[RMDB]
Source information:
The record gives the reactivity of an RNA of 207 nucleotides to DMS and 2A3. DMS (dimethyl sulfate) methylates the pairing face of unpaired adenines and cytosines. Values cover nucleotides 27 to 156. The RNA was probed in 150 mM KOAc, 10 mM MgCl2 and 150 mM bicine (pH 8.5) at 24 C. DMS adducts were read by reverse transcription with MarathonRT. 2A3 adducts were read by reverse transcription with SuperScript II with manganese. For DMS, 995 sequencing reads were counted.
RNA sequence: GGGAACGACUCGAGUAGAGUCGAAAAAUUAGGCGAGGCUCCUAUACAAACACAGGUUGCUGAUCUGACGACGUCGAGAGACGCCCAAGAUUAGGACAGGAUAUAUCGAACCAAGGUAUAUCCCCAUAAAACUCGGAACACUUCGGUGUUCCGAGAAGACCUUUUCAUAGUUCGCUAUGAAAAGGUCAAAAGAAACAACAACAACAAC
Reactivity to DMS in 0.01 (KOAc 150mM, MgCl2 10mM, bicine 150mM(pH8.5), 24C), signal-to-noise 1, nucleotides 027 to 156: a100u000u060a000g000g030c030g000a300g000g000c040u010c000c090u030a040u010a300c030a110a030a060c070a030c040a300g000g000u000u000g180c030u060g010a100u000c010u000g000a160c060g000a040c010g010u000c000g030a300g010a300g000a010c000g010c000c060c130a300a040g000a070u010u000a070g000g000a130c040a090g000g000a010u010a010u000a000u000c000g000a140a300c160c060a060a190g010g060u000a030u000a000u000c000c000c020c060a060u000a030a110a100a290c000u070c010g010g030a010a030c000a000c000u000u040c300g070g060u000g000u000u000c000c030g040a000g040a040a070
Reactivity to 2A3 in 0.01 (KOAc 150mM, MgCl2 10mM, bicine 150mM(pH8.5), 24C), signal-to-noise 2, nucleotides 027 to 156: a000u130u060a050g030g010c070g060a110g020g070c110u050c010c000u050a060u050a190c030a040a220a000c020a020c080a100g200g040u110u230g120c000u030g020a000u000c010u040g000a020c030g000a010c000g000u020c000g020a020g000a020g000a070c000g020c000c030c000a050a010g030a080u010u060a010g030g040a000c020a070g010g000a000u000a000u000a000u020c030g070a120a050c090c060a100a050g000g010u010a000u000a000u060c060c000c010c000a040u240a120a090a010a010c000u010c010g000g000a000a010c000a000c010u060u040c170g040g000u000g000u000u000c000c000g000a010g000a000a000